This 177-nucleotide RNA was probed chemically with DMS and 2A3.
RNA sequence: GGGAACGACUCGAGUAGAGUCGAAAAGCGCAGGGGCUGCGGCGGCGCAUCGAGAGUGGCGAGCUGAGCGCGGGCACCGCCCUGCCCGCCGAACGCGAACUCGCGGCGCGGCUCGGCGUGUCGCGGGCUAUGCAGAGGUGUUCGCACCUCUGCAUAGAAAAGAAACAACAACAACAAC
Reactivity to DMS in 0.01 (KOAc 150mM, MgCl2 10mM, bicine 150mM(pH8.5), 24C), signal-to-noise 2, nucleotides 027 to 126: g020c070g050c060a090g000g000g010g010c050u010g020c070g020g010c020g010g010c030g000c020a090u010c030g010a090g000a080g020u010g000g010c030g020a100g000c020u000g000a110g020c050g020c030g020g010g000c020a070c060c050g000c030c020c020u000g000c000c000c000g000c020c060g010a080a090c080g010c030g000a080a170c030u000c030g010c050g000g000c010g020c020g010g010c030u000c030g000g010c010g000u000g020u000c000g020c030g000g010g000
Reactivity to 2A3 in 0.01 (KOAc 150mM, MgCl2 10mM, bicine 150mM(pH8.5), 24C), signal-to-noise 1, nucleotides 027 to 126: g020c010g000c030a040g040g000g050g000c010u070g070c070g080g010c000g030g000c010g000c030a130u150c090g070a090g020a040g130u130g060g030c040g030a030g000c070u080g030a030g070c110g000c000g050g030g000c020a010c040c060g030c010c020c010u030g000c000c000c000g010c000c020g040a100a010c040g030c000g040a050a040c000u000c030g040c000g000g050c000g000c050g060g000c020u040c040g060g030c010g020u010g000u000c020g010c020g020g010g000
Description
Values cover nucleotides 27 to 126. For 2A3, 2,307 sequencing reads were counted. For DMS the reverse transcriptase was MarathonRT.